RNA sequence: GGGAACGACUCGAGUAGAGUCGAAAAACUACACCAGGAUUUGUUUUUAAGUUUUUGCUCUCAUCUAUAUGAUAAAGAUGAAAAUUAGCCUCUGAUGUAGUCACUUUCAAUGCGUUGAUCAUAGCAUUUGGUAAUGACAGUUCGCUGUCAUUACCAAAAAAGAAACAACAACAACAAC
Reactivity to DMS in 0.01 (KOAc 150mM, MgCl2 10mM, bicine 150mM(pH8.5), 24C), signal-to-noise 1, nucleotides 027 to 126: a030c020u030a040c010a040c050c050a030g020g000a130u080u020u000g000u000u020u010u020u000a030a140g050u000u000u000u030u020g030c110u000c100u000c100a030u000c080u000a090u020a070u090g010a110u020a080a060a040g000a020u030g000a010a020a060a090u000u010a060g010c100c070u010c040u040g010a030u000g000u010a010g000u030c120a030c110u010u000u030c090a010a020u010g020c060g050u010u000g000a090u000c030a080u000a040g000c090a070u000
Reactivity to 2A3 in 0.01 (KOAc 150mM, MgCl2 10mM, bicine 150mM(pH8.5), 24C), signal-to-noise 1, nucleotides 027 to 126: a000c050u050a000c060a030c030c000a000g010g000a120u120u130u170g060u050u070u010u030u070a100a090g020u020u040u120u140u220g040c040u040c000u000c000a030u000c000u030a130u020a030u300g050a000u110a120a170a000g010a010u060g000a000a020a000a230u060u090a000g000c020c000u010c000u030g010a040u000g030u000a080g000u030c030a060c000u050u140u080c010a030a000u050g040c000g050u030u040g030a090u050c010a100u040a070g080c000a000u000